[RMDB]
RNA sequence: GGGAACGACUCGAGUAGAGUCGAAAAUCAUAACAAAGCUAGCUCAUUCUAUGUGCCAGGCACUGUUCUAAGCACUUUGUAUGUGCUAAUUCAUUUAAUAAUCGUAAUAAUCCUAUAAAGUGGGUGCUCUUGUUACUCUCAUUUUGCAGAGGAGGAAGAGUGAUAGUACUUUCGAGUACUAUCACUCAAAAGAAACAACAACAACAAC
Reactivity to 2A3 in 0.01 (KOAc 150mM, MgCl2 10mM, bicine 150mM(pH8.5), 24C), signal-to-noise 3, nucleotides 027 to 156: u060c010a020u060a130a060c050a130a060a020g070c040u050a010g000c000u000c060a000u060u000c090u100a050u060g000u020g060c020c010a050g040g000c040a050c230u200g060u220u030c040u100a080a010g000c000a000c010u070u120u120g040u080a050u050g020u000g000c000u020a050a040u120u060c030a030u030u150u090a180a150u170a060a040u110c010g080u020a020a050u080a100a060u200c040c000u100a100u090a250a130a010g040u040g010g010g000u010g000c000u020c000u050u090g030u070u080a060c000u020c020u010c030a060u000u070u110u150g020c100a040g000a050g080g020a010g070g020a010a200
Reactivity to DMS in 0.01 (KOAc 150mM, MgCl2 10mM, bicine 150mM(pH8.5), 24C), signal-to-noise 2, nucleotides 027 to 156: u010c060a120u000a110a120c060a050a100a070g030c060u000a050g030c010u000c010a070u010u000c040u000a040u000g000u000g030c000c080a160g030g020c040a080c060u000g020u000u020c070u000a160a040g050c000a060c000u000u000u000g030u000a060u010g010u000g010c020u010a030a080u000u000c040a120u000u000u000a090a180u000a100a070u010c070g000u000a090a100u010a100a120u000c020c040u010a130u000a070a060a090g030u000g010g000g020u000g010c000u000c150u010u010g040u000u000a020c010u000c000u000c010a220u010u000u000u000g000c070a070g010a010g030g000a110g030g000a060a190